Description:
This 177-nucleotide RNA was probed chemically with DMS and 2A3. The 2A3 profile rests on 875 reads. For DMS the reverse transcriptase was MarathonRT. Reactivities are given for positions 27 through 126. The reactions ran in a buffer of 150 mM KOAc, 10 mM MgCl2 and 150 mM bicine (pH 8.5), at 24 C.

RNA sequence: GGGAACGACUCGAGUAGAGUCGAAAAAGAGAUGAAAUUGCCUCUAUUUGGUGUCGCCCAGUUAGUCGUGAAUCAGCUUAAAUACAACACAACGACACAUGAAUGGGGAGAGCGAGGUGAUUACGUGAGUGAAGAUCGAGUUCGCUCGAUCUUCACUAAAAGAAACAACAACAACAAC
Reactivity to DMS in 0.01 (KOAc 150mM, MgCl2 10mM, bicine 150mM(pH8.5), 24C), signal-to-noise 2, nucleotides 027 to 126: a050g000a210g000a120u000g020a070a120a070u000u000g000c070c010u000c000u000a070u000u010u010g030g030u000g010u000c030g010c010c060c050a130g000u000u000a020g020u040c040g020u000g020a080a090u000c130a080g000c060u000u010a040a040a100u010a060c090a090a090c130a040c110a130a170c020g000a040c020a090c130a110u010g000a050a050u000g000g000g030g000a130g000a040g000c100g000a050g010g020u000g010a020u000u000a040c100g010u000g010
Reactivity to 2A3 in 0.01 (KOAc 150mM, MgCl2 10mM, bicine 150mM(pH8.5), 24C), signal-to-noise 1, nucleotides 027 to 126: a040g050a030g010a050u100g110a000a000a060u020u040g010c010c040u040c040u080a040u010u090u050g180g020u100g030u010c020g050c020c000c000a020g050u000u100a000g020u000c000g030u000g050a050a090u020c020a080g100c030u180u150a140a110a050u230a100c080a160a000c010a030c010a070a110c040g000a010c000a000c020a100u110g210a190a070u050g040g000g020g000a100g000a020g020c020g000a060g060g060u020g040a000u030u130a030c100g010u020g120